[RMDB]
RNA sequence: GGGAACGACUCGAGUAGAGUCGAAAAGUACGAUACGUUUCAGUACACGUGGCGACUCUCUGUUCAGGGACUAGGAAAUCCGCUUGCCUCAAAAUCUGGUUGCGUGCUUAGGAUCAGCGUAUCGCCAGGCAAAUGUUAUGUUCGCAUAACAUUUGCCAAAAGAAACAACAACAACAAC
Reactivity to 2A3 in 0.01 (KOAc 150mM, MgCl2 10mM, bicine 150mM(pH8.5), 24C), signal-to-noise 6, nucleotides 027 to 126: g070u070a030c000g010a010u020a070c050g020u030u020u120c070a030g050u050a030c030a000c060g050u050g070g000c040g060a060c010u030c010u000c010u050g090u080u040c060a060g050g000g080a040c020u040a060g040g090a040a080a120u040c010c010g000c040u030u100g020c000c010u060c030a030a060a060a150u100c070u050g050g000u040u040g020c010g010u040g010c060u070u070a070g020g060a070u110c050a000g010c000g010u010a010u030c040g010c020c010a020
Reactivity to DMS in 0.01 (KOAc 150mM, MgCl2 10mM, bicine 150mM(pH8.5), 24C), signal-to-noise 2, nucleotides 027 to 126: g070u050a050c010g000a070u000a010c020g030u000u000u000c060a090g020u040a120c080a050c120g000u000g010g000c050g030a030c060u020c020u040c040u020g040u050u010c090a160g000g000g000a040c090u000a070g030g000a080a060a090u030c020c040g030c060u010u000g000c010c030u020c080a100a030a070a070u000c100u020g010g030u010u000g000c010g080u010g040c060u040u000a130g000g010a070u000c130a040g010c030g010u000a040u010c030g000c010c000a140